[RMDB]
Structure probing data (DMS and 2A3) for a 177-nucleotide construct. The 2A3 profile rests on 5,726 reads. For 2A3 the reverse transcriptase was SuperScript II with manganese.
RNA sequence: GGGAACGACUCGAGUAGAGUCGAAAAGCUCGGCCUUUCGAGGCCGAGCAGACGCCGUUUGCCUAGGCUAUAGGCUAAAUUAAAACACAAGCUGAAACAGAACUGCUGAACAUUUCGAUGUUCAGAAAGCAAUCUAAAUUUUCGAAUUUAGAUUGCUAAAAGAAACAACAACAACAAC
Reactivity to DMS in 0.01 (KOAc 150mM, MgCl2 10mM, bicine 150mM(pH8.5), 24C), signal-to-noise 4, nucleotides 027 to 126: g010c000u000c010g020g000c000c000u000u000u010c180g010a020g030g040c010c000g000a000g030c000a010g010a120c120g010c020c010g010u000u000u010g010c000c000u010a020g010g000c050u030a100u000a040g000g010c010u000a020a070a110u000u010a060a060a080a110c110a070c110a060a060g010c050u000g000a110a060a090c100a080g010a130a110c140u000g000c010u000g010a010a010c000a010u010u000u010c140g010a030u000g000u000u000c000a020g000a050a070
Reactivity to 2A3 in 0.01 (KOAc 150mM, MgCl2 10mM, bicine 150mM(pH8.5), 24C), signal-to-noise 4, nucleotides 027 to 126: g010c000u010c010g020g000c020c000u120u130u140c180g110a010g010g020c000c000g000a000g000c000a000g000a000c050g030c000c020g030u020u030u040g020c000c000u010a020g010g020c110u120a070u020a120g010g000c000u000a050a050a060u110u140a030a040a060a030c120a010c060a080a040g050c060u110g100a080a100a030c030a030g120a140a040c040u140g000c000u010g020a000a000c000a010u060u110u130c180g070a010u010g000u000u030c000a010g030a040a010
DMS adducts were read by reverse transcription with MarathonRT.